Structure probing data (DMS) for a 177-nucleotide construct.

[RMDB]
RNA sequence: GGGAACGACUCGAGUAGAGUCGAAAAGAUAUGGAAGGUCUAUUUGAGCAUCGAUCUCGGAAACGAGGGAGCUCUUAUAGAGCCUUCCUAAGUCAAAGCAGGACGUUCCUUCGGGAACGUCCUGCAACAUAGGUCGUAACUUCGGUUACGACCUAUGAAAAGAAACAACAACAACAAC
Reactivity to DMS in 0.01 (KOAc 150mM, MgCl2 10mM, bicine 150mM(pH8.5), 24C), signal-to-noise 2, nucleotides 027 to 126: g000a040u000a300u000g000g000a020a010g000g010u000c000u000a010u000u010u000g010a020g000c010a300u010c110g010a040u010c000u000c010g010g010a130a090a190c020g010a030g000g000g000a030g020c000u000c000u000u000a000u000a010g000a060g000c010c000u000u010c000c000u000a010a090g000u000c040a080a100a140g000c000a000g020g030a010c000g020u000u000c000c010u000u000c220g040g000g000a010a000c000g010u010c010c010u000g000c010a000a040
The reactions ran in a buffer of 150 mM KOAc, 10 mM MgCl2 and 150 mM bicine (pH 8.5), at 24 C.
Source: RMDB library TTRDEL, as collected in RNAgym.
In probing experiments dimethyl sulfate is read out at A N1 and C N3, which are open when not base-paired.
Reactivities are given for positions 27 through 126.